[RMDB]
RNA sequence: GGGAACGACUCGAGUAGAGUCGAAAAUUGGUGAAGCAAGGUGGCCUAGCAGAGUGUUUUCAACAAAGCUUGCACCCUGUCAGACCAUACUUGUUUUAACUUAAACGAUAUGGUUUCGACCAUAUCGCAUAUUUAAAGACUUCGGUCUUUAAAUAUGAAAAGAAACAACAACAACAAC
Reactivity to DMS in 0.01 (KOAc 150mM, MgCl2 10mM, bicine 150mM(pH8.5), 24C), signal-to-noise 6, nucleotides 027 to 126: u010u010g010g010u000g000a060a100g000c010a010a010g010g030u000g000g010c010c000u000a080g010c000a010g000a050g020u000g010u000u000u000u000c060a060a130c300a120a150a170g010c090u000u000g020c010a020c000c010c010u000g010u000c050a010g000a020c000c000a010u000a070c020u000u000g010u000u000u000u000a050a050c030u000u010a050a080a240c010g010a010u000a000u000g000g000u000u000u010c210g000a050c000c000a010u000a000u000c000g010
Reactivity to 2A3 in 0.01 (KOAc 150mM, MgCl2 10mM, bicine 150mM(pH8.5), 24C), signal-to-noise 5, nucleotides 027 to 126: u090u110g020g000u020g020a000a000g010c010a000a000g000g010u000g000g010c000c000u000a010g000c000a000g000a020g020u020g020u040u090u070u110c090a140a130c050a130a280a030g030c030u010u020g000c000a010c000c000c010u010g020u030c010a000g000a010c010c000a010u140a270c090u000u000g000u030u040u020u040a060a020c010u030u170a080a070a030c020g000a010u000a000u000g000g030u050u050u120c180g060a020c010c000a000u000a000u000c000g000